[RMDB]
Chemical mapping of a 177-nucleotide RNA with 2A3.
Conditions: 150 mM KOAc, 10 mM MgCl2 and 150 mM bicine (pH 8.5), 24 C.

RNA sequence: GGGAACGACUCGAGUAGAGUCGAAAACGCCGACGUUCAAUCCGGUCGACGGCGCGAUGGUCGGUGUGGCCAAGCCGAUCGUCAUCAACUUCGCGGUGCCGAUCGCCGACCGGGCGAUGGCCGAAAGAGCCAGGGCUGUUUUCGAACAGCCCUGGCUAAAAGAAACAACAACAACAAC
Reactivity to 2A3 in 0.01 (KOAc 150mM, MgCl2 10mM, bicine 150mM(pH8.5), 24C), signal-to-noise 1, nucleotides 027 to 126: c120g040c040c000g040a080c110g000u120u020c030a100a100u000c000c000g030g020u000c000g050a070c000g050g000c090g000c000g030a030u000g030g000u000c010g040g040u050g140u130g000g050c020c030a020a000g000c000c000g000a000u000c000g000u000c000a130u100c100a050a280c040u290u200c130g000c000g020g070u130g050c110c040g050a030u000c000g000c020c000g000a040c000c020g000g000g030c030g120a190u030g000g000c000c040g100a150a170a000g180